[RMDB]
RNA sequence: GGGAACGACUCGAGUAGAGUCGAAAAGAUAUGGAUGUGAGAGCGAUAAGCUGGGUAUCGGAAACGAUAUUAGCUUUUGACGCUUUAACACAUCCUAAGUCAAAUCUGAUUGGUUCGCCAAUCAGAAGUCGUGAUGAUUGUUCGCAAUCAUCACGACAAAAGAAACAACAACAACAAC
Reactivity to DMS in 0.01 (KOAc 150mM, MgCl2 10mM, bicine 150mM(pH8.5), 24C), signal-to-noise 1, nucleotides 027 to 126: g000a070u020a260u020g000g000a010u020g050u000g000a200g000a020g030c000g010a150u020a020a050g000c000u000g020g010g050u000a000u020c000g020g000a160a050a220c000g000a000u000a000u000u000a020g030c000u000u000u000u000g020a140c050g020c000u000u020u080a200a030c000a000c010a000u000c000c010u000a070a170g000u020c020a050a160a190u000c000u000g010a010u000u000g010g000u010u030c300g000c020c000a000a000u000c020a010g000a040a110
Reactivity to 2A3 in 0.01 (KOAc 150mM, MgCl2 10mM, bicine 150mM(pH8.5), 24C), signal-to-noise 1, nucleotides 027 to 126: g000a000u050a020u160g000g000a020u000g000u050g020a060g040a000g090c000g080a120u030a230a010g010c020u090g000g100g140u000a000u020c000g050g060a040a040a010c040g000a000u000a000u030u100a020g000c050u100u130u050u160g150a150c040g000c000u030u000u120a300a020c010a000c000a000u010c010c000u010a150a020g040u000c010a040a030a080u010c020u000g010a010u010u010g000g110u030u090c300g000c050c000a010a000u020c010a000g030a010a010
An RNA of 177 nucleotides, treated with DMS and 2A3 and read out base by base. For 2A3, 2,022 sequencing reads were counted. DMS (dimethyl sulfate) methylates the pairing face of unpaired adenines and cytosines. Conditions: 150 mM KOAc, 10 mM MgCl2 and 150 mM bicine (pH 8.5), 24 C. Reactivities are given for positions 27 through 126. The DMS profile rests on 835 reads.